[RMDB]
RNA sequence: GGGAACGACUCGAGUAGAGUCGAAAACAGCUCGGCGCCGCACGCCAGCGCAGCAUGAGCAUCAUCGCGCGCCAGUUCUGGUUCGCCCCGUGCGGUGGCUACGCGCGCGCGUAUUGUCAACGCCACCUAAUAAGACCCUGUUCGCAGGGUCUUAUUAAAAAGAAACAACAACAACAAC
Reactivity to 2A3 in 0.01 (KOAc 150mM, MgCl2 10mM, bicine 150mM(pH8.5), 24C), signal-to-noise 1, nucleotides 027 to 126: c030a010g030c020u040c050g040g000c010g030c030c050g000c000a050c000g050c050c030a020g020c050g000c030a060g000c050a060u100g070a020g000c010a080u140c010a040u070c050g000c020g000c020g010c010c020a060g040u180u110c070u170g070g000u100u180c090g070c000c000c010c000g050u070g000c060g060g030u010g010g030c000u020a000c050g000c000g000c010g000c000g000c010g060u030a050u050u300g070u090c040a060a000c050g000c000c010a030c000c020
Reactivity to DMS in 0.01 (KOAc 150mM, MgCl2 10mM, bicine 150mM(pH8.5), 24C), signal-to-noise 4, nucleotides 027 to 126: c110a110g010c030u000c080g010g010c030g000c050c040g010c050a100c120g010c130c070a090g000c020g010c040a090g030c060a090u000g010a090g010c090a120u010c090a080u000c070g000c030g010c020g020c000c090a090g000u010u010c120u010g030g000u000u010c100g010c030c030c020c090g010u000g000c060g020g000u000g000g000c010u000a040c050g000c080g010c120g000c070g000c020g020u000a050u000u010g010u000c100a080a080c090g010c000c030a060c060c050